[RMDB]
RNA sequence: GGGAACGACUCGAGUAGAGUCGAAAAGAUAUGGAAGAUGGAACUACUCUGUAAGACAGUCGAAGAACAACUUGAAUCGGAAACGAUUCAAGUUGGGAGACUGUUUGAGGAGCCAUCUUCCUAAGUCGAUAAUCAUAAGGUUCGCCUUAUGAUUAUCAAAAGAAACAACAACAACAAC
Reactivity to 2A3 in 0.01 (KOAc 150mM, MgCl2 10mM, bicine 150mM(pH8.5), 24C), signal-to-noise 5, nucleotides 027 to 126: g050a040u140a050u200g010g010a010a000g010a000u010g010g010a060a020c020u180a080c010u190c030u070g200u300a020a010g020a010c010a000g000u000c020g160a300a080g040a150a030c000a010a000c010u010u000g000a000a010u000c000g010g030a080a030a070c020g000a000u000u000c000a010a000g000u000u000g000g020g000a050g000a000c000u000g010u020u010u010g010a010g000g000a000g010c000c000a000u000c000u000u010c000c000u000a010a000g040u020c070
Reactivity to DMS in 0.01 (KOAc 150mM, MgCl2 10mM, bicine 150mM(pH8.5), 24C), signal-to-noise 7, nucleotides 027 to 126: g010a110u010a300u000g010g010a010a020g010a010u000g000g010a080a040c050u010a300c010u000c000u010g000u010a300a060g000a000c000a010g010u000c000g010a180a160g020a170a220c010a000a010c000u000u000g000a020a000u000c000g000g000a110a100a190c000g010a010u000u000c000a000a000g000u000u000g000g000g000a130g000a010c000u000g010u000u000u000g010a190g000g010a000g010c000c000a010u000c000u000u000c000c000u000a010a050g020u000c110
An RNA of 177 nucleotides, treated with 2A3 and DMS and read out base by base. The reactions ran in a buffer of 150 mM KOAc, 10 mM MgCl2 and 150 mM bicine (pH 8.5), at 24 C. 2A3 is a SHAPE reagent: it acylates the 2'-hydroxyl of flexible nucleotides of all four kinds. Source: RMDB library TTRINS, as collected in RNAgym. For DMS the reverse transcriptase was MarathonRT. The 2A3 profile rests on 22,172 reads.